[RMDB]
RNA sequence: GGGAACGACUCGAGUAGAGUCGAAAACAUGGGCGUGGCCGUCACGCUGUGGGAUUUAUCUCAUACUUGGCGUCCAGUGAGAUAGGGAUCUGACUUACUAGCUACGAAUCGUUGCCAGGUAGGACGAUCAAGGCAUGCUCUUCGGGGCAUGUCUUGAAAAAGAAACAACAACAACAAC
Reactivity to 2A3 in 0.01 (KOAc 150mM, MgCl2 10mM, bicine 150mM(pH8.5), 24C), signal-to-noise 1, nucleotides 027 to 126: c010a040u030g010g060g030c000g030u020g000g060c080c020g070u030c000a010c000g040c060u000g000u020g000g000g000a020u000u140u200a210u100c000u000c000a000u000a160c000u030u070g110g020c000g000u000c010c020a020g040u080g150a210g040a060u080a080g110g010g000a010u030c060u060g020a000c010u030u090a010c030u000a020g150c030u060a090c030g060a020a020u070c020g010u010u040g120c010c020a000g120g020u090a040g010g020a020c040g010a000